Structure probing data (DMS and 2A3) for a 207-nucleotide construct. The reactions ran in a buffer of 150 mM KOAc, 10 mM MgCl2 and 150 mM bicine (pH 8.5), at 24 C.
RNA sequence: GGGAACGACUCGAGUAGAGUCGAAAACGCAAAGCUGCAGCGCGGCGCUCUGGAGGCCUUGCCCCGCGCACUGCUCUUUAAAUGGCCCGACGUGAGGGCACUUCGCGGGCAGUGCUGCGGCCUCGUGAAACUGCCCCUAAGUUCGCUUAGGGGCAAAAGAUACUCUAUAGUUCGCUAUAGAGUAUCUAAAAGAAACAACAACAACAAC
Reactivity to DMS in 0.01 (KOAc 150mM, MgCl2 10mM, bicine 150mM(pH8.5), 24C), signal-to-noise 1, nucleotides 027 to 156: c050g030c010a030a030a040g020c020u010g020c040a080g030c020g010c050g030g000c060g030c070u000c030u000g010g010a140g000g010c020c060u040u000g000c010c030c000c020g050c100g020c010a080c020u000g010c000u000c010u000u000u020a090a060a110u010g020g020c020c020c020g030a230c150g030u000g010a130g010g020g000c000a000c040u000u000c070g030c300g020g000g050c000a070g000u000g010c000u000g020c050g000g050c020c010u000c060g000u000g010a070a060a060c060u000g010c000c000c000c000u000a020a030g030u000u020c300g040c020u000u000a010g020g010g020g110c010a000a010a000
Reactivity to 2A3 in 0.01 (KOAc 150mM, MgCl2 10mM, bicine 150mM(pH8.5), 24C), signal-to-noise 3, nucleotides 027 to 156: c040g030c020a060a020a050g000c020u070g010c070a060g050c010g000c020g140g030c040g000c060u090c070u100g130g010a010g000g040c050c070u040u110g040c000c000c000c000g010c000g010c010a000c020u030g000c000u010c030u050u120u160a140a180a150u160g080g000c010c000c010g070a140c080g090u170g060a180g000g000g020c010a040c010u120u120c020g010c060g080g010g040c000a000g000u000g020c010u050g000c020g000g000c010c000u040c000g000u010g000a090a050a020c050u040g000c010c000c000c010u000a000a010g010u040u100c140g100c110u000u000a000g000g010g000g040c000a000a010a000